The record gives the reactivity of an RNA of 207 nucleotides to 2A3 and DMS. The RNA was probed in 150 mM KOAc, 10 mM MgCl2 and 150 mM bicine (pH 8.5) at 24 C. High 2A3 reactivity points to a flexible backbone, as in loops and unpaired stretches.
[RMDB]
RNA sequence: GGGAACGACUCGAGUAGAGUCGAAAAGCUUUGUAAUGGGAUGGGAUCCGAAGCCCCAUUGAGGGAUAAUACAGGCUCUCCCAUCCAACUCCUAUUCCAACACGUCCUCGUCGUACAGAGUGGUAACUAAGGUAUAGCUCCUUCGGGAGCUAUACAAGUCUUUGUUAAACUUCGGUUUAACAAAGACAAAAGAAACAACAACAACAAC
Reactivity to 2A3 in 0.01 (KOAc 150mM, MgCl2 10mM, bicine 150mM(pH8.5), 24C), signal-to-noise 3, nucleotides 027 to 156: g020c020u130u130u100g040u170a160a140u150g110g000g010a000u000g000g000g020a030u140c000c010g030a060a020g040c000c000c010c070a180u090u190g100a300g000g000g020a040u090a270a020u120a120c110a070g000g010c010u010c000u000c010c000c000a000u000c000c010a000a000c000u010c000c000u030a060u100u070c020c010a030a020c040a030c100g070u050c030c030u040c050g080u040c050g010u050a050c030a030g080a020g060u050g010g060u080a060a060c090u050a110a020g090g000u010a000u010a000g000c000u000c000c010u010u010c040g090g000g020a000g050c000u000a000u000a000c000a010a010
Reactivity to DMS in 0.01 (KOAc 150mM, MgCl2 10mM, bicine 150mM(pH8.5), 24C), signal-to-noise 1, nucleotides 027 to 156: g000c040u000u000u000g010u000a050a180u000g010g000g010a050u020g010g000g000a040u000c020c030g000a190a170g010c040c020c010c000a300u000u020g030a140g020g020g020a110u000a060a140u020a130c170a220g000g000c010u010c070u000c000c010c010a020u010c020c020a070a030c020u000c030c020u000a090u010u010c000c040a090a090c060a070c030g000u010c010c030u000c010g030u010c010g020u000a050c070a060g000a080g000u000g000g000u000a020a100c050u000a070a100g050g010u000a030u000a000g040c000u010c010c000u000u000c300g060g030g050a010g010c000u000a000u000a000c000a020a090